[RMDB]
RNA sequence: GGGAACGACUCGAGUAGAGUCGAAAAGAAAAGGAGAUCCGAAAAGGUUCUCGCUCGAACUGGUGAUUCUACUGACACCACUGUUGCGAGUGAACAGUGUGGGAAAUAAACCACAGUAGAAAGAAAAGGGAUCAUAAAUGUUCGCAUUUAUGAUCCCAAAAGAAACAACAACAACAAC
Reactivity to 2A3 in 0.01 (KOAc 150mM, MgCl2 10mM, bicine 150mM(pH8.5), 24C), signal-to-noise 5, nucleotides 027 to 126: g030a000a050a000a000g110g010a000g000a010u020c010c010g080a100a170a020a140g000g000u000u000c000u000c000g060c000u050c020g020a050a040c050u040g020g020u060g050a200u070u000c010u040a050c020u080g010a020c020a020c050c020a010c040u040g000u040u070g120c060g020a060g030u140g060a030a020c030a080g040u050g000u050g050g020g040a080a230a110u200a040a090a010c010c000a000c000a000g000u010a000g020a030a060a010g080a020a090a010a020
Reactivity to DMS in 0.01 (KOAc 150mM, MgCl2 10mM, bicine 150mM(pH8.5), 24C), signal-to-noise 2, nucleotides 027 to 126: g030a030a090a040a030g020g000a010g010a000u000c030c000g030a190a030a130a180g000g020u020u000c010u000c000g020c030u000c010g000a180a200c080u040g010g070u010g000a080u000u000c000u010a050c040u000g000a200c050a050c050c000a020c050u010g000u000u010g000c100g000a110g010u000g000a090a000c050a030g000u000g010u020g020g010g010a050a110a100u030a040a140a090c040c000a060c000a000g060u000a000g000a020a110a180g000a060a100a180a210